[RMDB]
RNA sequence: GGGAACGACUCGAGUAGAGUCGAAAAGGAGUGGCGAGCACUUCGUACGAGCCUGUCACCUUCUAUAUGGAUUUCUCCAUCUCAAGCGUAGGAGCUAUUUCAUUCGUGGUGAGGGGACCUGAGGGUACACGUCCUCACCAUUCGUGGUGAGGACGUGAAAAGAAACAACAACAACAAC
Reactivity to DMS in 0.01 (KOAc 150mM, MgCl2 10mM, bicine 150mM(pH8.5), 24C), signal-to-noise 2, nucleotides 027 to 126: g030g010a050g000u000g010g000c210g000a120g020c030a100c010u000u020c130g040u010a070c160g000a110g030c000c020u010g000u000c030a030c030c020u010u000c060u000a070u010a070u020g010g000a050u020u010u000c030u000c000c010a170u000c100u030c160a110a180g010c110g000u000a270g000g000a100g010c130u010a050u010u000u010c060a060u000u010c140g040u000g000g030u000g000a110g000g000g010g000a080c010c030u000g000a140g020g020g010u000a220
Reactivity to 2A3 in 0.01 (KOAc 150mM, MgCl2 10mM, bicine 150mM(pH8.5), 24C), signal-to-noise 2, nucleotides 027 to 126: g050g010a030g020u030g000g050c080g020a090g080c030a000c000u070u040c040g000u030a050c080g110a060g120c010c010u020g110u010c010a020c020c030u160u050c040u050a090u020a030u150g050g000a050u010u060u010c040u080c010c000a110u000c070u020c110a120a130g080c060g130u080a150g000g010a020g000c030u070a090u020u070u090c020a020u020u070c070g080u050g000g000u030g020a020g000g030g020g050a020c040c040u090g050a100g100g030g000u070a030